[RMDB]
RNA sequence: GGGAACGACUCGAGUAGAGUCGAAAACAGGCAAAUCGAUGUGGCCAUCAAGAACACCGCCCAAACUGCUGGACUCCCCAUCAAGCUGGUGGUCCUCAACGGCACCACUGUGGUGUCUUCCACCGACAGGCGUAGCAUUUUUCGAAAUGCUACGCCUAAAAGAAACAACAACAACAAC
Reactivity to 2A3 in 0.01 (KOAc 150mM, MgCl2 10mM, bicine 150mM(pH8.5), 24C), signal-to-noise 1, nucleotides 027 to 126: c000a010g120g060c070a030a010a140u120c140g000a040u040g020u090g090g020c000c030a080u140c030a040a070g060a090a010c020a010c030c020g040c020c010c000a070a090a020c070u080g060c010u020g000g110a120c040u040c020c010c010c000a020u120c060a010a030g120c030u040g010g000u030g000g030u020c000c020u150c000a030a080c050g000g010c010a010c060c010a090c070u090g070u140g080g020u000g020u020c000u030u020c030c000a020c000c000g000a020c010
Reactivity to DMS in 0.01 (KOAc 150mM, MgCl2 10mM, bicine 150mM(pH8.5), 24C), signal-to-noise 2, nucleotides 027 to 126: c110a140g000g040c130a080a070a090u000c140g040a040u000g040u010g010g000c070c050a090u000c100a040a060g030a070a040c020a080c060c020g040c040c020c030a070a180a130c080u020g010c040u000g020g000a060c060u010c010c000c000c010a140u010c160a040a050g030c090u020g030g040u010g000g000u000c080c040u000c090a050a010c130g000g000c000a030c010c010a220c230u010g040u010g030g010u000g010u010c010u000u010c030c030a070c070c040g010a120c160